[RMDB]
This 207-nucleotide RNA was probed chemically with DMS and 2A3. For DMS the reverse transcriptase was MarathonRT. The DMS profile rests on 1,964 reads. The RNA was probed in 150 mM KOAc, 10 mM MgCl2 and 150 mM bicine (pH 8.5) at 24 C. It was measured as part of the RMDB library RNAMAK.
RNA sequence: GGGAACGACUCGAGUAGAGUCGAAAACCGUAGGUCCAAAGACGCGAUGAAAUGUAGGGAACCGUGAUUCGAAAGAGUCACUCAGUACCUACAUGGAGCGUUGAUGGACCUAAACGGAAAAGGUUAACUUUUAGACUUCGGUCUAAAAGUUAACCAACACCUAUUUGACCUUCGGGUCAAAUAGGUGAAAAGAAACAACAACAACAAC
Reactivity to DMS in 0.01 (KOAc 150mM, MgCl2 10mM, bicine 150mM(pH8.5), 24C), signal-to-noise 2, nucleotides 027 to 156: c010c010g040u000a050g030g030u000c000c000a000a090a300g010a040c010g020c000g060a160u010g000a130a110a050u010g000u000a030g000g010g010a220a290c300c300g050u000g000a020u000u000c010g010a120a110a280g000a070g040u000c000a020c000u030c020a090g040u020a180c000c000u000a000c020a000u000g000g000a160g040c020g040u020u000g020a300u000g000g060a000c010c010u000a000a000a100c010g010g010a100a080a040a160g030g010u000u000a000a000c010u000u000u000u040a010g040a060c000u000u000c290g090g000u000c020u000a000a020a000a020g030u000u020a000a020c010c010a070a070
Reactivity to 2A3 in 0.01 (KOAc 150mM, MgCl2 10mM, bicine 150mM(pH8.5), 24C), signal-to-noise 1, nucleotides 027 to 156: c000c000g000u020a010g000g010u030c000c000a000a040a020g010a010c000g000c020g020a030u000g020a020a010a010u000g010u000a000g000g020g010a000a000c010c000g000u000g000a010u000u010c020g010a080a100a090g000a040g010u000c000a000c000u000c000a000g000u000a000c000c010u010a000c000a000u000g000g020a010g010c000g000u000u000g000a010u020g000g030a000c000c000u000a000a000a000c010g090g030a020a020a080a160g000g030u020u020a000a000c000u010u000u000u010a000g000a010c000u020u070c300g060g000u010c000u000a000a000a010a000g000u000u000a000a000c000c000a000a000